[RMDB]
The data come from the RNA Mapping Database (RMDB), library OK1LIB. An RNA of 177 nucleotides, treated with DMS and read out base by base.
RNA sequence: GGGAACGACUCGAGUAGAGUCGAAAAUCGUGAGAUGUGGUGCCUCACGCGCUCGAGGCGUCCGUGGUCAGAGAGACCACUGACGCAAAAACUCGAGCGCAAAUAAACGGCAUUACAUGCAGAAUAACCAGUACUAAUAGUUCGCUAUUAGUACUGGAAAAGAAACAACAACAACAAC
Reactivity to DMS in 0.01 (KOAc 150mM, MgCl2 10mM, bicine 150mM(pH8.5), 24C), signal-to-noise 5, nucleotides 027 to 126: u020c070g010u000g030a120g000a010u000g000u010g020g020u000g000c020c000u020c210a130c140g010c000g000c000u020c000g020a020g000g010c000g020u000c000c080g050u010g000g010u000c000a170g020a180g020a210g020a020c000c000a000c010u000g000a010c000g020c030a020a030a060a070a250c010u020c020g000a010g020c000g060c010a000a050a040u030a050a100a110c230g000g000c000a010u000u000a000c020a000u000g020c070a080g010a110a040u030a080a160

Record summary: The reactions ran in a buffer of 150 mM KOAc, 10 mM MgCl2 and 150 mM bicine (pH 8.5), at 24 C. Reactivities are given for positions 27 through 126.